[RMDB]
Annotation: Structure probing data (DMS and 2A3) for a 177-nucleotide construct. Reactivities are given for positions 27 through 126. For 2A3 the reverse transcriptase was SuperScript II with manganese. The reactions ran in a buffer of 150 mM KOAc, 10 mM MgCl2 and 150 mM bicine (pH 8.5), at 24 C.
RNA sequence: GGGAACGACUCGAGUAGAGUCGAAAACUUGUUAGACCUCUUAUGUGUCCUAUAGAAACUGAAAAGUUGUCUAAUUCUGGUUACUUAGCUCACCUGCUUUCCAAUUGACAGGAGCACAGAGGAAGGGCUGCCUCUAGGUAUUCGUACCUAGAGGCAGAAAAGAAACAACAACAACAAC
Reactivity to DMS in 0.01 (KOAc 150mM, MgCl2 10mM, bicine 150mM(pH8.5), 24C), signal-to-noise 2, nucleotides 027 to 126: c050u000u000g030u010u010a070g010a140c020c030u010c050u000u010a110u000g010u010g000u000c020c040u000a190u010a070g010a110a020a000c040u000g000a080a070a100a020g000u000u010g000u000c030u000a020a080u020u000c150u000g010g000u000u000a060c200u000u010a070g020c110u000c120a070c170c080u000g000c060u000u010u010c020c060a040a100u000u000g010a110c200a020g000g000a100g010c020a040c100a010g010a060g000g010a130a060g020g000g020
Reactivity to 2A3 in 0.01 (KOAc 150mM, MgCl2 10mM, bicine 150mM(pH8.5), 24C), signal-to-noise 1, nucleotides 027 to 126: c030u110u070g120u070u090a090g090a100c010c030u110c020u050u040a060u120g020u020g030u010c000c000u060a050u050a250g060a010a030a030c060u080g010a050a090a020a040g020u050u090g100u080c020u060a050a090u120u080c040u060g030g010u090u010a080c030u040u070a060g010c020u050c050a110c010c000u020g000c040u090u100u040c010c020a050a180u110u080g030a090c030a020g000g020a040g080c040a000c000a030g050a000g020g050a020a090g070g020g020